[RMDB]
RNA sequence: GGGAACGACUCGAGUAGAGUCGAAAACGUCGAUCAAGUCGGAGGGUUCGCUAUAUAUACUAACCUGGUUGCACAUAACCAAGUCGAACCUAUGUUGCAUGCUAUUUCGGAUGUUACAAGCAGGGAACUACCAGUUAUGAUUCGUCAUAACUGGUAGAAAAGAAACAACAACAACAAC
Reactivity to DMS in 0.01 (KOAc 150mM, MgCl2 10mM, bicine 150mM(pH8.5), 24C), signal-to-noise 8, nucleotides 027 to 126: c130g000u020c040g010a060u020c100a050a100g000u010c030g020g010a120g010g010g000u000u000c020g000c170u010a080u040a120u030a130u040a120c200u030a070a120c090c050u000g000g010u000u010g010c210a100c190a080u030a040a040c020c010a030a050g000u020c020g010a040a110c010c020u000a050u010g010u000u010g000c050a050u000g000c030u010a130u010u010u010c050g000g010a060u020g000u020u010a060c130a070a140g000c060a040g000g010g000a070a140
Reactivity to 2A3 in 0.01 (KOAc 150mM, MgCl2 10mM, bicine 150mM(pH8.5), 24C), signal-to-noise 9, nucleotides 027 to 126: c020g060u030c030g020a080u080c130a150a060g120u060c030g060g070a080g060g040g000u020u020c000g000c040u020a020u010a010u030a030u030a300c100u100a060a090c030c040u030g020g050u030u060g080c130a100c040a240u230a080a020c010c020a040a010g060u090c020g020a010a000c000c000u020a070u120g070u020u040g020c050a040u070g040c020u120a170u120u120u120c090g060g020a040u050g030u070u080a070c050a080a030g050c030a040g050g050g000a040a010